[RMDB]
RNA sequence: GGGAACGACUCGAGUAGAGUCGAAAAUCGGCCGUAACUAUAACGGUCCUAAGGUAGCGAAAUUCCUUGUCGGGUAAGUUCCGACCUGCACGAAUCGUGAAACGAGUUGGGCACUGUCUCAACCAGGCAGCUCUCUUCGAUUCGUCGAAGAGAGCUGAAAAGAAACAACAACAACAAC
Reactivity to DMS in 0.01 (KOAc 150mM, MgCl2 10mM, bicine 150mM(pH8.5), 24C), signal-to-noise 2, nucleotides 027 to 126: u010c140g020g030c000c000g050u000a040a080c260u040a170u070a160a000c020g010g000u020c000c090u010a000a060g020g030u000a060g030c010g000a040a120a070u040u000c000c000u010u020g010u000c010g000g110g070u000a040a130g010u050u010c000c050g000a090c020c010u000g040c020a170c070g010a000a020u000c060g000u000g000a110a030a060c090g000a080g000u000u000g050g000g140c020a230c180u060g000u000c030u000c030a080a000c030c070a130g000g010
Reactivity to 2A3 in 0.01 (KOAc 150mM, MgCl2 10mM, bicine 150mM(pH8.5), 24C), signal-to-noise 3, nucleotides 027 to 126: u120c020g020g030c000c000g000u070a110a090c110u080a160u040a220a060c010g000g020u060c000c000u100a080a020g040g020u020a000g020c020g030a040a030a090u050u000c010c010u020u040g010u000c020g010g010g050u080a100a080g050u100u020c000c000g000a010c000c000u040g000c080a050c060g030a050a080u170c020g040u050g040a030a000a060c080g030a050g100u010u010g000g000g050c040a060c300u160g020u070c000u020c020a000a040c000c000a000g070g000
This 177-nucleotide RNA was probed chemically with DMS and 2A3. For DMS the reverse transcriptase was MarathonRT. The reactions ran in a buffer of 150 mM KOAc, 10 mM MgCl2 and 150 mM bicine (pH 8.5), at 24 C. Source: RMDB library RFM100, as collected in RNAgym.